[RMDB]
RNA sequence: GGGAACGACUCGAGUAGAGUCGAAAAAGAAUAGCCAACUUCAAUUUCAGGCCCUCUAGUGAUCUCAGAAGCAUUCAGAUCUCUUAGAAUGUUUUCCUAGUUUUGCCUUACUAGCCAAAAUAAAAACCCACUAAUCAGGAUUCGUCCUGAUUAGUGGAAAAGAAACAACAACAACAAC
Reactivity to 2A3 in 0.01 (KOAc 150mM, MgCl2 10mM, bicine 150mM(pH8.5), 24C), signal-to-noise 9, nucleotides 027 to 126: a000g090a040a060u100a060g040c020c000a040a040c040u070u060c040a070a230u050u060u110c040a030g030g020c010c020c000u010c010u010a020g010u030g090a090u030c030u010c070a040g030a120a020g030c030a020u060u040c000a020g060a270u040c060u010c030u100u070a030g010a060a030u040g030u020u150u020u010c010c000u010a060g010u020u040u060u080g020c010c010u020u060a050c020u040a020g020c020c030a040a050a060a010u240a070a070a080a030a030c010
Reactivity to DMS in 0.01 (KOAc 150mM, MgCl2 10mM, bicine 150mM(pH8.5), 24C), signal-to-noise 3, nucleotides 027 to 126: a090g000a050a030u000a050g010c100c060a050a090c170u020u000c090a080a110u000u030u020c090a070g000g020c000c030c020u000c030u000a110g000u000g000a050u010c030u010c210a130g070a100a110g020c030a020u040u010c040a050g010a070u000c120u020c020u010u020a060g020a050a070u000g000u020u000u000u000c030c060u000a120g040u020u000u000u020g000c070c020u030u000a080c050u000a060g010c080c030a070a000a050a090u020a000a020a070a050a130c210
Structure probing data (2A3 and DMS) for a 177-nucleotide construct. For 2A3 the reverse transcriptase was SuperScript II with manganese. DMS adducts were read by reverse transcription with MarathonRT. Values cover nucleotides 27 to 126. In probing experiments dimethyl sulfate is read out at A N1 and C N3, which are open when not base-paired. For DMS, 3,103 sequencing reads were counted. Conditions: 150 mM KOAc, 10 mM MgCl2 and 150 mM bicine (pH 8.5), 24 C.